[RMDB]
RNA sequence: GGGAACGACUCGAGUAGAGUCGAAAACAGUGAUGGAAACAUCACUGAAAAACGUGUGAGCGCACCACGAAAAAGUCGAUCGAAUACCGAUCGACAAGCGCUAAAGUCAUGCCGAAAGGCAUGACAAGCCUGGUAAUGGCUUCGGCCAUUACCAGGCAAAAGAAACAACAACAACAAC
Reactivity to 2A3 in 0.01 (KOAc 150mM, MgCl2 10mM, bicine 150mM(pH8.5), 24C), signal-to-noise 2, nucleotides 027 to 126: c000a000g000u020g000a000u000g000g040a000a070a000c000a000u000c000a000c010u000g000a050a000a000a010a000c010g000u010g000u010g000a060g000c000g010c000a000c010c020a000c060g240a090a030a070a000a000g030u010c000g000a000u000c000g010a050a060u120a300c120c020g000a010u000c000g000a000c000a000a000g000c000g050c000u030a080a010a000g010u010c000a000u000g030c000c000g080a110a090a010g000g000c000a000u010g000a000c020a030a000
An RNA of 177 nucleotides, treated with 2A3 and read out base by base. The RNA was probed in 150 mM KOAc, 10 mM MgCl2 and 150 mM bicine (pH 8.5) at 24 C. 2A3 adducts were read by reverse transcription with SuperScript II with manganese.